[RMDB]
RNA sequence: GGGAACGACUCGAGUAGAGUCGAAAAUUCGCCAGUUGCAGAAUAUGAAUAUGGCACAGCUCCAGGCGGAAAUCGCGAAGCAUUUCCCGUCGCGUCUGGGUUACGUUACACCGCUUGCCGCUGGUGCACUAAUAGGUAUAUUCGUAUACCUAUUAGUAAAAGAAACAACAACAACAAC
Reactivity to DMS in 0.01 (KOAc 150mM, MgCl2 10mM, bicine 150mM(pH8.5), 24C), signal-to-noise 9, nucleotides 027 to 126: u010u010c050g010c000c020a040g010u000u000g010c030a050g010a130a080u010a120u010g000a060a060u000a140u000g010g010c010a060c040a040g000c030u000c110c010a070g000g010c010g000g000a030a040a040u010c090g020c070g010a100a120g020c120a070u000u000u000c050c010c020g010u000c030g000c100g000u010c050u000g000g000g010u000u000a040c120g010u000u000a090c090a140c140c120g010c070u000u010g020c030c060g010c010u000g010g010u000g010c220
Reactivity to 2A3 in 0.01 (KOAc 150mM, MgCl2 10mM, bicine 150mM(pH8.5), 24C), signal-to-noise 9, nucleotides 027 to 126: u100u040c010g010c010c000a020g020u040u050g030c030a020g050a220a080u160a100u260g080a090a020u130a120u240g090g000c020a020c010a040g010c020u010c030c020a020g030g000c000g010g040a040a040a030u100c050g000c060g150a100a030g040c050a050u020u040u030c010c040c020g020u020c020g010c030g040u050c020u040g020g000g020u030u050a030c050g010u020u040a060c060a030c060c060g040c100u060u080g010c000c010g000c010u020g030g030u050g040c020
An RNA of 177 nucleotides, treated with DMS and 2A3 and read out base by base. For DMS, 72,727 sequencing reads were counted. It was measured as part of the RMDB library OK2TRN. DMS adducts were read by reverse transcription with MarathonRT.